[RMDB]
RNA sequence: GGGAACGACUCGAGUAGAGUCGAAAAAUAAAGUAGUCUCCUGCUGCGUCUGAGGUUUCCGUUGCAGUCCUCGGAACCAGGACCUCGGCGUGGCCUAGCGAGUUAUGGCGACGAAGGCCGUGAAAAACACAGAGUUUAUGUUCGCAUAAACUCUGUGAAAAGAAACAACAACAACAAC
Reactivity to 2A3 in 0.01 (KOAc 150mM, MgCl2 10mM, bicine 150mM(pH8.5), 24C), signal-to-noise 2, nucleotides 027 to 126: a010u160a010a100a030g110u110a020g070u050c020u000c010c000u000g000c000u000g010c000g000u020c090u210g030a020g020g000u010u100u040c010c020g050u070u080g010c080a040g130u090c020c010u050c020g050g010a050a050c060c010a070g000g080a000c000c010u000c000g020g000c010g010u000g010g040c010c010u020a030g020c020g060a010g000u070u070a100u110g030g000c010g010a130c120g060a130a010g120g000c000c010g060u100g030a080a110a000a030a000
Reactivity to DMS in 0.01 (KOAc 150mM, MgCl2 10mM, bicine 150mM(pH8.5), 24C), signal-to-noise 3, nucleotides 027 to 126: a090u010a080a050a120g020u000a040g000u010c020u000c010c010u010g010c020u000g000c010g010u010c000u000g020a010g010g000u000u000u010c040c090g010u010u000g010c100a130g010u010c060c050u010c090g010g010a050a070c150c090a170g010g000a040c030c010u000c000g000g010c010g030u000g000g010c030c110u010a040g000c050g010a020g020u000u030a050u000g010g000c020g000a060c070g020a140a110g000g010c030c000g030u000g000a030a060a070a070a100

Chemical mapping of a 177-nucleotide RNA with 2A3 and DMS. For 2A3, 2,627 sequencing reads were counted. For 2A3 the reverse transcriptase was SuperScript II with manganese.